[RMDB]
RNA sequence: GGGAACGACUCGAGUAGAGUCGAAAAUGCUAAUUUCAAUGUAUUGUUUGCUAUGACCAUGCCUAAGACUUGUUUCGGACCCAUAGUCCGAAAGAUCUUUGUUGAUGGCGUGCCAUUUGUAGUAUCUGUUAGGUAAAGAGUUCGCUCUUUACCUAACAAAAGAAACAACAACAACAAC
Reactivity to 2A3 in 0.01 (KOAc 150mM, MgCl2 10mM, bicine 150mM(pH8.5), 24C), signal-to-noise 4, nucleotides 027 to 126: u070g010c010u070a040a100u100u170u160c110a070a090u110g060u080a100u100u160g120u110u100u070g020c010u020a020u040g020a050c020c000a000u010g000c000c000u030a040a020g020a010c000u040u090g010u080u020u000c000g010g000a010c000c000c140a190u180a040g010u000c000c000g010a000a000a000g030a020u060c070u010u160u130g020u000u020g010a050u090g000g000c010g010u020g000c020c010a080u080u050u060g050u020a040g010u010a090u060c100u030
Reactivity to DMS in 0.01 (KOAc 150mM, MgCl2 10mM, bicine 150mM(pH8.5), 24C), signal-to-noise 4, nucleotides 027 to 126: u010g020c070u000a060a090u000u000u000c170a090a110u000g010u010a070u000u000g000u000u000u000g010c030u000a020u000g000a050c260c030a020u000g030c010c000u010a100a290g000a000c010u010u000g010u000u000u010c000g010g000a000c000c120c300a140u010a190g010u000c000c000g010a000a000a020g000a140u010c050u000u010u010g010u000u000g000a250u000g000g000c020g020u000g000c130c030a060u000u000u000g010u000a030g000u010a060u010c110u010
Record summary
The data come from the RNA Mapping Database (RMDB), library 15KREP. An RNA of 177 nucleotides, treated with 2A3 and DMS and read out base by base. Conditions: 150 mM KOAc, 10 mM MgCl2 and 150 mM bicine (pH 8.5), 24 C. For DMS, 4,316 sequencing reads were counted. The 2A3 profile rests on 3,877 reads. 2A3 adducts were read by reverse transcription with SuperScript II with manganese.